Chemical mapping of a 207-nucleotide RNA with 2A3. The reactions ran in a buffer of 150 mM KOAc, 10 mM MgCl2 and 150 mM bicine (pH 8.5), at 24 C. Source: RMDB library RSTRND, as collected in RNAgym. The 2A3 profile rests on 542 reads. Reactivities are given for positions 27 through 156.
[RMDB]
RNA sequence: GGGAACGACUCGAGUAGAGUCGAAAAUUAGAAAUGAAGCGUUAAUUGCAUGCGGAGGGCGUUGGCUGGCCUCCUAAAAAGCCGACAAAACAAUAAAUGCCGAACCUAAGGCUGAAUGCGAAAUUAUCAGCUUCGCUGAUCUUAAUGAUCUAAGAGUCUAGCCCAAAUAGUUCGCUAUUUGGGCUAGAAAAGAAACAACAACAACAAC
Reactivity to 2A3 in 0.01 (KOAc 150mM, MgCl2 10mM, bicine 150mM(pH8.5), 24C), signal-to-noise 1, nucleotides 027 to 156: u140u030a030g070a000a050a060u050g000a040a000g000c000g010u000u050a030a040u060u010g000c000a010u020g000c010g020g000a000g000g210g010c000g000u010u000g000g030c000u000g030g170c000c010u030c010c000u110a070a160a040a020a000g000c020c000g040a030c090a200a090a000a000c100a050a080u170a270a100a120u190g010c060c040g080a020a030c000c070u080a020a020g000g000c000u020g050a020a030u050g000c040g000a080a000a000u050u070a010u100c020a010g000c010u030u000c010g090c140u020g000a000u000c020u040u300a170a090u180g000a000u000c000u050a060a150g010a000g050u000